Notes
The record gives the reactivity of an RNA of 207 nucleotides to 2A3. Conditions: 150 mM KOAc, 10 mM MgCl2 and 150 mM bicine (pH 8.5), 24 C. 2A3 adducts were read by reverse transcription with SuperScript II with manganese. It was measured as part of the RMDB library RNAMAK. The 2A3 profile rests on 777 reads.
[RMDB]
RNA sequence: GGGAACGACUCGAGUAGAGUCGAAAACCGCGAUUCGUCGCGGCCAACUGGGGUCGAUCUACCCUGAGCCUUUUGACGAGCUGAAGCCUCCACGGCUCGAUAAGGAACUACUCAGGAGAUCGACGGAGGCACCCUGAACGUCUGGUUCGCCAGACAACGUGCAAAUGUUCUUCGGAACAUUUGCACGAAAAGAAACAACAACAACAAC
Reactivity to 2A3 in 0.01 (KOAc 150mM, MgCl2 10mM, bicine 150mM(pH8.5), 24C), signal-to-noise 2, nucleotides 027 to 156: c000c000g000c000g010a000u050u100c260g010u060c030g200c030g010g060c000c020a110a080c090u200g120g050g000g010u000c000g000a000u000c000u070a170c030c020c060u020g000a000g070c000c010u130u130u130u210g240a180c080g000a010g000c000u030g000a080a010g060c020c000u010c000c000a060c000g080g010c010u010c000g040a060u100a150a000g050g000a050a040c200u300a110c000u280c030a010g000g030a010g000a020u000c000g000a000c000g000g000a010g000g000c000a040c010c000c020u100g110a230a040c010g010u010c000u000g000g040u050u060c220g100c040c000a020g000a000c030a030a000